Record summary
This 177-nucleotide RNA was probed chemically with DMS and 2A3. Values cover nucleotides 27 to 126. Conditions: 150 mM KOAc, 10 mM MgCl2 and 150 mM bicine (pH 8.5), 24 C.
RNA sequence: GGGAACGACUCGAGUAGAGUCGAAAAUAGAAGCUUUAAGAUUCAUCGUCUUGAACUUGAUACACAUAGUAUAGCACCUUAAAAACGAAUCAUCUGCUAGUUCAGUAUUUUCUACUUACAAUCACUCCCACAUCACUACUUUCGAGUAGUGAUGUGGAAAAGAAACAACAACAACAAC
Reactivity to DMS in 0.01 (KOAc 150mM, MgCl2 10mM, bicine 150mM(pH8.5), 24C), signal-to-noise 3, nucleotides 027 to 126: u030a120g000a040a050g020c120u000u000u020a010a010g020a040u030u010c270a070u000c230g010u010c050u000u010g020a060a000c050u000u010g000a060u010a050c070a080c040a140u000a070g010u000a030u010a070g040c070a060c100c010u000u010a040a040a040a060a060c080g000a030a090u020c090a060u020c030u000g020c040u000a050g050u000u000c100a040g000u030a050u030u000u020u030c020u000a040c040u000u000a070c180a040a090u040c110a030c120u000c110
Reactivity to 2A3 in 0.01 (KOAc 150mM, MgCl2 10mM, bicine 150mM(pH8.5), 24C), signal-to-noise 7, nucleotides 027 to 126: u130a020g080a080a010g030c070u020u050u050a060a010g020a030u120u110c040a060u130c170g030u000c000u000u010g020a020a030c010u000u030g050a010u120a070c070a010c030a090u130a030g080u060a080u050a070g060c030a080c030c000u110u140a050a060a010a020a020c060g030a060a040u040c020a040u030c020u040g040c030u030a020g050u090u060c040a020g040u030a070u050u070u010u040c040u030a080c020u080u060a040c070a040a120u070c000a020c090u050c000